Record summary: An RNA of 177 nucleotides, treated with DMS and 2A3 and read out base by base. For DMS, 5,161 sequencing reads were counted. It was measured as part of the RMDB library OK2TST. For 2A3, 3,748 sequencing reads were counted.

RNA sequence: GGGAACGACUCGAGUAGAGUCGAAAACGGCUGAGGCCAUUUGGAAUUCGAUACGCUUGCCGGACGGCAGCACCAGCACCGGAAUUUCGGUGCUGGUGCCCAACGUCUCGACCUUGUCGAAAUUCAGUGGUCAUAUUAGUUUCGACUAAUAUGACCAAAAAGAAACAACAACAACAAC
Reactivity to DMS in 0.01 (KOAc 150mM, MgCl2 10mM, bicine 150mM(pH8.5), 24C), signal-to-noise 4, nucleotides 027 to 126: c140g010g010c020u000g010a150g070g000c020c020a120u000u020u010g010g000a030a070u000u000c000g000a020u000a020c070g010c230u010u000g020c040c020g000g000a020c020g010g010c300a120g000c010a000c000c010a020g000c000a020c010c010g020g000a200a170u000u010u010c000g020g000u000g010c000u010g000g010u000g010c010c090c050a060a190c000g010u010c000u000c020g010a030c020c030u000u000g000u000c010g000a020a040a070u000u010c030a110g020
Reactivity to 2A3 in 0.01 (KOAc 150mM, MgCl2 10mM, bicine 150mM(pH8.5), 24C), signal-to-noise 2, nucleotides 027 to 126: c040g020g010c030u100g100a080g050g120c010c030a050u130u110u120g080g020a000a020u040u000c010g000a010u010a030c050g020c160u080u080g060c040c010g010g010a010c010g000g000c030a000g000c000a010c000c000a010g010c000a010c000c020g100g120a250a300u110u210u300c010g030g000u010g010c000u010g000g000u000g010c000c000c000a010a010c010g000u000c070u100c070g020a040c010c030u010u030g000u000c010g000a030a050a080u040u010c020a030g040